[RMDB]
RNA sequence: GGGAACGACUCGAGUAGAGUCGAAAACUGCAGUGUGCCAUAAUUGUGCCACUUCACUCCAGUCUGGGCAGAGUGAGGCCCUGCCCCCUGCACCCCCAAAAAACAUCCAUGGUGCCUUGGAAACAAGGGAAGGGGCGUCCUGGGUUGAGGCCCAGCACAAAAUGAGGAUCUUCGGAUCCUCAUUUUGAAAAGAAACAACAACAACAAC
Reactivity to 2A3 in 0.01 (KOAc 150mM, MgCl2 10mM, bicine 150mM(pH8.5), 24C), signal-to-noise 2, nucleotides 027 to 156: c060u060g040c070a020g040u100g090u250g080c010c010a140u130a300a180u300u200g050u170g050c000c010a000c000u020u060c040a000c030u060c040c080a030g200u110c010u040g000g000g000c000a060g020a060g120u030g030a130g040g000c000c000c000u010g030c000c000c000c000c000u060g050c060a150c000c010c020c020c150a080a110a020a000a110a070c060a010u140c120c040a020u080g030g040u070g140c000c020u000u010g000g020a000a070a000c010a100a040g000g000g020a030a060g010g000g010g010c080g040u070c010c060u020g000g030g060u010u040g020a080g000g040c010c030c000a000g060c020a000
Reactivity to DMS in 0.01 (KOAc 150mM, MgCl2 10mM, bicine 150mM(pH8.5), 24C), signal-to-noise 1, nucleotides 027 to 156: c050u000g020c070a050g040u010g000u010g030c000c020a140u000a060a190u000u010g060u010g040c030c050a020c000u010u000c040a050c100u020c020c000a070g000u010c000u000g060g040g110c000a150g000a090g080u000g000a100g000g010c020c020c020u000g010c030c000c000c000c000u000g010c040a200c030c060c050c000c020a010a060a080a090a080a070c060a070u000c040c020a090u020g040g020u000g030c010c110u030u020g000g020a240a100a150c040a070a060g010g010g030a080a070g000g000g020g000c010g030u010c010c020u000g000g000g000u000u000g000a180g040g000c000c000c000a040g010c060a250